[RMDB]
RNA sequence: GGGAACGACUCGAGUAGAGUCGAAAAGGCGUCGACGGGCGGCAGGAUAUUCGCGGCGCUGAGCCCAGCUGCUAUCAACCCUAUGCCGACUACUAGCAGCGUGUAGGCCCACCCGUACAGCCCGAAGGCACAAGUAAUCAUUCGUGAUUACUUGUGCAAAAGAAACAACAACAACAAC
Reactivity to 2A3 in 0.01 (KOAc 150mM, MgCl2 10mM, bicine 150mM(pH8.5), 24C), signal-to-noise 6, nucleotides 027 to 126: g020g000c010g010u020c010g020a160c040g020g010g000c020g030g000c040a050g090g060a050u080a180u240u250c080g000c010g020g000c010g000c050u030g010a010g000c000c000c010a010g020c000u020g010c010u020a020u160c050a060a130c050c000c020u100a120u250g050c050c000g050a060c020u080a020c000u010a030g010c020a000g000c050g070u090g050u070a050g010g000c000c040c010a050c020c000c000g020u060a050c080a060g010c000c000c010g060a070a060g120
Reactivity to DMS in 0.01 (KOAc 150mM, MgCl2 10mM, bicine 150mM(pH8.5), 24C), signal-to-noise 6, nucleotides 027 to 126: g000g010c030g020u000c020g020a090c030g020g000g010c080g020g010c190a060g010g010a150u010a100u010u010c100g020c040g000g000c030g010c040u000g020a050g010c000c010c020a150g000c010u000g010c010u000a020u010c150a080a140c070c010c040u000a090u010g010c080c040g000a070c080u000a120c200u000a020g010c010a010g000c000g000u000g030u010a070g010g000c010c020c030a080c030c000c000g000u010a060c060a120g000c000c000c020g010a190a090g010

Conditions: 150 mM KOAc, 10 mM MgCl2 and 150 mM bicine (pH 8.5), 24 C. An RNA of 177 nucleotides, treated with 2A3 and DMS and read out base by base. 2A3 adducts were read by reverse transcription with SuperScript II with manganese. It was measured as part of the RMDB library OK2TST.